[RMDB]
RNA sequence: GGGAACGACUCGAGUAGAGUCGAAAAAUGUCUGAAAACGAUGCUCGUGGAUGAGAUCUCACAAUUUGAUGUCGAAUGUAUUGAUUUAGUACAGUAUCCAUUUGUAUCGAAAAAGUUACGAGAUCUACGUCGCAUGCUAGUUCGCUAGCAUGCGACGAAAAGAAACAACAACAACAAC
Reactivity to 2A3 in 0.01 (KOAc 150mM, MgCl2 10mM, bicine 150mM(pH8.5), 24C), signal-to-noise 1, nucleotides 027 to 126: a000u110g080u000c010u030g010a040a000a000a040c020g040a050u070g030c030u050c070g020u040g040g000a020u030g010a000g010a050u080c010u040c000a080c040a120a220u080u030u070g050a050u090g050u080c020g000a120a000u030g080u010a050u010u070g170a230u010u150u140a140g000u110a050c020a020g000u060a000u000c010c020a000u050u000u010g000u010a000u000c010g060a010a000a000a000a140g110u100u060a060c140g000a020g000a060u000c030u060a070
Reactivity to DMS in 0.01 (KOAc 150mM, MgCl2 10mM, bicine 150mM(pH8.5), 24C), signal-to-noise 1, nucleotides 027 to 126: a100u000g000u000c020u020g030a060a030a140a100c040g000a090u000g020c020u000c010g030u000g020g010a040u010g030a090g010a020u000c080u000c030a050c080a070a260u010u000u000g000a060u000g000u020c050g000a060a050u000g030u000a020u000u010g010a160u020u000u010a110g010u010a040c040a000g040u000a030u000c170c010a050u000u010u010g020u000a000u010c010g000a040a040a010a050a070g010u000u000a120c090g000a020g000a010u000c040u000a090

Chemical mapping of a 177-nucleotide RNA with 2A3 and DMS. 2A3 adducts were read by reverse transcription with SuperScript II with manganese. The RNA was probed in 150 mM KOAc, 10 mM MgCl2 and 150 mM bicine (pH 8.5) at 24 C. The 2A3 profile rests on 864 reads. It was measured as part of the RMDB library OK2TST.